[RMDB]
Conditions: 150 mM KOAc, 10 mM MgCl2 and 150 mM bicine (pH 8.5), 24 C. Chemical mapping of a 177-nucleotide RNA with DMS and 2A3. Reactivities are given for positions 27 through 126. The data come from the RNA Mapping Database (RMDB), library M2PK50. DMS adducts were read by reverse transcription with MarathonRT. The 2A3 profile rests on 6,894 reads. 2A3 adducts were read by reverse transcription with SuperScript II with manganese.

RNA sequence: GGGAACGACUCGAGUAGAGUCGAAAAGAGCCUUGGUUCGCCAAGGCUCAAAUAAAUUCAGGUGAUUUGCUACCUUUAAGUGCAGCUUGAAAUUCAAAGGAAAAAGGCACAAGUUCGCUUGUGCCAAGGUUAAUUACAUCUUCGGAUGUAAUUAACCAAAAGAAACAACAACAACAAC
Reactivity to DMS in 0.01 (KOAc 150mM, MgCl2 10mM, bicine 150mM(pH8.5), 24C), signal-to-noise 5, nucleotides 027 to 126: g000a010g010c000c000u000u000g000g010u000u030c200g020c010c000a000a010g000g010c010u000c000a010a030a060u010a060a080a150u010u000c070a020g010g000u000g000a180u010u000u000g000c010u000a010c010c030u000u020u020a030a040g010u000g000c010a040g010c170u010u000g010a030a060a130u010u010c090a050a080a120g010g000a040a040a060a120a100g000g010c000a010c000a020a010g010u010u010c250g010c000u000u000g010u000g010c000c010a010a010
Reactivity to 2A3 in 0.01 (KOAc 150mM, MgCl2 10mM, bicine 150mM(pH8.5), 24C), signal-to-noise 4, nucleotides 027 to 126: g010a000g000c010c000u000u010g030g000u060u080c150g020c070c010a010a000g010g010c000u000c000a000a000a000u000a000a010a010u100u060c030a010g000g010u030g080a210u060u050u150g010c010u020a020c020c000u080u140u220a070a020g010u010g000c010a010g000c020u020u060g090a060a070a070u300u180c130a130a050a100g060g030a090a090a030a040a060g000g000c000a000c000a010a010g000u040u070c200g040c080u000u010g000u000g000c000c000a000a000